[RMDB]
RNA sequence: GGGAACGACUCGAGUAGAGUCGAAAACGGACGGGCGAUCCCAACGGCGCCUGCGGCGUCGCCAGCGACGCGGCGGGAGUGGUCGGCUGGUGGGUCAAUCCCCAGGCUCCUGGUAUCGACGCCUGCGACUUAAAUACAACUUCGGUUGUAUUUAAGUAAAAGAAACAACAACAACAAC
Reactivity to 2A3 in 0.01 (KOAc 150mM, MgCl2 10mM, bicine 150mM(pH8.5), 24C), signal-to-noise 4, nucleotides 027 to 126: c030g050g110a010c030g000g030g040c000g010a100u050c020c000c010a020a030c040g060g000c030g000c010c020u030g010c040g130g000c010g010u020c020g040c070c040a070g120c030g060a020c060g000c010g070g010c060g010g000g010a040g060u150g070g040u040c020g030g050c050u050g010g080u140g060g020g010u040c010a000a100u080c010c000c010c000a010g090g000c010u000c010c030u070g020g020u070a100u280c040g010a010c030g040c020c010u030g000c020g000
Reactivity to DMS in 0.01 (KOAc 150mM, MgCl2 10mM, bicine 150mM(pH8.5), 24C), signal-to-noise 6, nucleotides 027 to 126: c090g020g010a110c050g020g010g020c020g010a100u000c030c020c020a120a140c120g010g010c040g020c020c020u010g020c050g010g020c050g020u000c000g010c090c120a120g000c070g000a030c060g020c020g000g010c070g010g000g000a060g020u000g010g020u000c020g010g020c040u010g010g020u010g000g000g010u010c070a040a120u000c020c010c010c040a300g000g000c020u000c020c030u010g000g010u000a060u010c070g000a080c030g010c010c010u000g020c090g010
Structure probing data (2A3 and DMS) for a 177-nucleotide construct. For DMS the reverse transcriptase was MarathonRT. The 2A3 profile rests on 6,432 reads. Conditions: 150 mM KOAc, 10 mM MgCl2 and 150 mM bicine (pH 8.5), 24 C. The DMS profile rests on 10,575 reads.